Source: RMDB library OK3TST, as collected in RNAgym. Chemical mapping of a 207-nucleotide RNA with 2A3 and DMS. For 2A3, 3,265 sequencing reads were counted. The reactions ran in a buffer of 150 mM KOAc, 10 mM MgCl2 and 150 mM bicine (pH 8.5), at 24 C. The DMS profile rests on 3,089 reads.

[RMDB]
RNA sequence: GGGAACGACUCGAGUAGAGUCGAAAAGUCAUGCCUUCGGGCAUGACAGGUACCGAGAGGUACCAAAUAGCGUACAGAAGACUCAGACUGUACGCUAAAAAAGUGUGUGUUCAAUAAGCUCCAAUUGAACACACACUAAAAUGGAGCAAGGGUGUUAUAUCCUACCAUAGUUCGCUAUGGUAGGAUAAAAAGAAACAACAACAACAAC
Reactivity to 2A3 in 0.01 (KOAc 150mM, MgCl2 10mM, bicine 150mM(pH8.5), 24C), signal-to-noise 4, nucleotides 027 to 156: g000u000c010a000u000g000c010c010u070u100c250g040g000g000c000a000u000g000a000c010a000g000g010u010a000c010c010g020a030g000a010g050g000u000a000c010c000a020a020a020u040a000g000c010g000u000a000c000a000g050a160a040g050a300c060u050c140a010g010a070c000u020g000u000a000c000g000c000u010a000a030a000a000a030a030g000u010g000u010g000u000g000u000u000c000a010a010u060a160a040g050c040u030c020c030a040a080u000u000g000a000a000c000a000c000a000c000a000c000u000a000a010a000a020u160g020g020a040g030c050a060a060g130g030g020u050g020u080u050a110
Reactivity to DMS in 0.01 (KOAc 150mM, MgCl2 10mM, bicine 150mM(pH8.5), 24C), signal-to-noise 2, nucleotides 027 to 156: g010u000c000a000u000g020c020c010u000u010c300g080g030g070c050a000u020g010a000c000a060g040g000u010a000c000c000g000a280g020a300g020g000u000a020c000c020a030a040a100u000a050g000c000g020u010a020c000a040g010a110a120g030a090c030u000c050a180g000a190c000u010g000u000a030c000g000c000u010a000a000a080a080a030a030g020u000g010u000g030u000g000u000u010c000a050a010u000a100a150g020c080u010c050c020a160a040u000u010g000a050a000c010a020c000a000c000a020c000u010a020a010a050a080u000g020g000a050g030c010a100a100g030g010g050u000g000u010u000a230